The data come from the RNA Mapping Database (RMDB), library TTRDEL. This 177-nucleotide RNA was probed chemically with DMS. The RNA was probed in 150 mM KOAc, 10 mM MgCl2 and 150 mM bicine (pH 8.5) at 24 C. Values cover nucleotides 27 to 126.

[RMDB]
RNA sequence: GGGAACGACUCGAGUAGAGUCGAAAAGAUAUGGAUUUCCAUUGGGACUUGGAUUUAUCGGAAACGAUUGUCAGUCCCUGUGGAGAAUCCUAAGUCAAAUCUAAGCCUCCUUCGGGAGGCUUAGAAACUAUUAGCUUUUCUUCGGAAAAGCUAAUAGAAAAGAAACAACAACAACAAC
Reactivity to DMS in 0.01 (KOAc 150mM, MgCl2 10mM, bicine 150mM(pH8.5), 24C), signal-to-noise 2, nucleotides 027 to 126: g010a040u000a300u000g000g010a020u000u000u000c000c000a010u000u010g000g000g010a010c000u010u010g040g010a020u000u010u010a000u000c010g000g000a140a140a260c000g020a000u000u000g000u000c010a030g010u000c000c000c000u000g040u000g000g010a060g020a010a010u000c010c000u010a010a150g010u000c030a070a120a190u000c000u000a000a010g010c000c000u000c000c000u000u010c260g020g010g000a000g010g000c000u000u000a010g000a020a060a170